[RMDB]
RNA sequence: GGGAACGACUCGAGUAGAGUCGAAAAGGGGACACAGGGAACAGAGAGAAGAGGGGCGAGAGGGAUCAAUAGAUGGGAGAUAAUAAAGUUUAUGAGAGGUAUGGGGCGGUCUUCUGUACGACGGGGCGUUAAGCUGAUUGUUCGCAAUCAGCUUAACAAAAGAAACAACAACAACAAC
Reactivity to DMS in 0.01 (KOAc 150mM, MgCl2 10mM, bicine 150mM(pH8.5), 24C), signal-to-noise 2, nucleotides 027 to 126: g000g000g000g020a110c140a060c100a220g000g000g020a050a020c120a040g010a110g020a160g050a060a090g000a120g000g000g000g030c080g000a100g020a110g000g000g010a050u010c060a080a020u000a090g000a040u000g000g000g010a070g000a080u000a020a090u040a030a080a120g000u010u010u000a110u020g010a140g000a100g010g000u000a070u040g000g000g010g020c050g000g000u020c040u000u000c020u020g040u000a000c150g000a040c060g000g000g020g010c120
Reactivity to 2A3 in 0.01 (KOAc 150mM, MgCl2 10mM, bicine 150mM(pH8.5), 24C), signal-to-noise 3, nucleotides 027 to 126: g060g010g000g000a040c100a000c070a130g020g000g050a070a010c060a030g130a020g030a010g020a160a000g020a040g020g000g000g020c100g020a030g000a020g000g010g010a000u040c060a030a140u110a080g070a040u060g010g000g010a120g040a020u050a060a020u060a100a110a070g030u100u170u070a170u100g030a090g000a040g090g010u090a080u120g000g000g010g000c060g000g020u000c000u060u010c020u020g070u040a010c050g020a000c030g020g010g000g000c080
Description:
Chemical mapping of a 177-nucleotide RNA with DMS and 2A3. For DMS, 3,062 sequencing reads were counted. Values cover nucleotides 27 to 126. The 2A3 profile rests on 1,926 reads. For DMS the reverse transcriptase was MarathonRT.